[RMDB]
RNA sequence: GGGAACGACUCGAGUAGAGUCGAAAAAAGAAAUCAAAAAAGAUUUCUGAGACAAACACGCUUCACAAUGUGCGGCAAAGAAACAUUGUUUAAGCAAAGGCACUUCGCAAUGUGUGCUCAAACAUUGACUACCGUCCACCGUUCGCGGUGGACGGAAUCUAUUGGUUAUCUUCGGAUAACCAAUAGAAAAAGAAACAACAACAACAAC
Reactivity to 2A3 in 0.01 (KOAc 150mM, MgCl2 10mM, bicine 150mM(pH8.5), 24C), signal-to-noise 3, nucleotides 027 to 156: a000a000g060a030a020a000u070c090a130a130a270a200a020a030g000a000u020u010u000c010u020g020a050g050a060c060a040a140a010c050a000c050g010c000u010u000c010a000c000a010a000u000g000u010g020c020g040g060c070a120a150a100g110a030a060a000c000a010u000u010g140u040u080u150a040a000g040c040a110a030a020g130g000c010a010c020u060u060c080g020c090a040a050u050g020u000g020u030g010c070u040c150a070a090a020c060a040u030u080g030a080c030u050a080c050c010g000u000c000c000a010c000c000g020u040u080c200g010c030g090g000u010g000g010a000c000g000g000a000a020
Reactivity to DMS in 0.01 (KOAc 150mM, MgCl2 10mM, bicine 150mM(pH8.5), 24C), signal-to-noise 2, nucleotides 027 to 156: a120a040g010a010a000a010u020c020a010a030a140a160a220a300g000a030u000u000u000c030u000g010a200g010a150c090a100a140a130c060a030c000g010c010u000u000c120a100c010a010a010u000g030u000g010c060g000g010c020a110a060a050g030a070a050a010c000a010u000u000g020u010u000u000a010a050g000c060a040a110a190g030g000c030a030c030u000u000c180g010c080a100a060u000g000u000g000u000g010c000u010c060a060a090a030c020a100u000u000g010a150c110u000a180c000c000g050u000c000c010a020c000c010g020u000u000c240g020c020g000g010u000g000g000a000c000g000g010a000a020
Structure probing data (2A3 and DMS) for a 207-nucleotide construct. DMS adducts were read by reverse transcription with MarathonRT. Values cover nucleotides 27 to 156. For 2A3, 1,944 sequencing reads were counted. For DMS, 3,824 sequencing reads were counted. The reactions ran in a buffer of 150 mM KOAc, 10 mM MgCl2 and 150 mM bicine (pH 8.5), at 24 C. For 2A3 the reverse transcriptase was SuperScript II with manganese.